[RMDB]
The record gives the reactivity of an RNA of 207 nucleotides to 2A3 and DMS. For DMS, 8,769 sequencing reads were counted. The RNA was probed in 150 mM KOAc, 10 mM MgCl2 and 150 mM bicine (pH 8.5) at 24 C. The 2A3 profile rests on 2,186 reads. For 2A3 the reverse transcriptase was SuperScript II with manganese. The data come from the RNA Mapping Database (RMDB), library OK3TST.

RNA sequence: GGGAACGACUCGAGUAGAGUCGAAAACAACCUGGGAGUUACGUCCGGAUAUUGCUCCAGGGGCAAUAGAACGGUAGACAUCAACUGAUGCGAGAGCAUCUCAACUUAUGGACCUUAGUGUAUCGCAAGACGACCGGUCCAGUCGGAAUUGCGUAGAAAUUAUGGUGCACUUCGGUGCACCAUAAUUAAAAGAAACAACAACAACAAC
Reactivity to 2A3 in 0.01 (KOAc 150mM, MgCl2 10mM, bicine 150mM(pH8.5), 24C), signal-to-noise 3, nucleotides 027 to 156: c050a000a050c000c000u070g050g050g010a060g040u060u070a030c060g070u050c000c000g010g020a030u010a020u020u040g000c000u000c050c100a140g040g010g010g010c020a030a010u000a040g070a150a000c020g000g020u010a030g080a140c020a070u070c020a030a140c040u040g010a010u020g020c020g010a040g000a010g020c010a070u020c030u000c030a020a170c020u110u080a040u090g010g020a010c000c010u030u080a050g020u020g020u070a050u060c010g010c020a010a000g040a060c020g010a010c040c000g040g000u020c040c010a000g000u010c000g020g050a200a100u060u000g010c010g000u030a020g070a020
Reactivity to DMS in 0.01 (KOAc 150mM, MgCl2 10mM, bicine 150mM(pH8.5), 24C), signal-to-noise 4, nucleotides 027 to 156: c030a040a230c020c010u000g020g030g000a130g000u000u010a100c080g020u010c030c020g010g020a190u000a030u010u000g010c010u010c010c040a300g040g030g040g010c030a020a050u000a030g000a130a110c040g010g010u010a130g010a080c070a070u000c040a120a130c060u010g020a040u000g000c010g000a290g010a260g030c010a030u000c010u000c060a060a100c090u000u000a090u000g000g010a020c010c010u000u000a050g010u000g010u000a090u000c040g010c040a050a060g000a300c020g020a010c010c040g010g020u010c050c030a050g000u000c010g010g010a130a180u000u000g000c010g000u010a130g010a090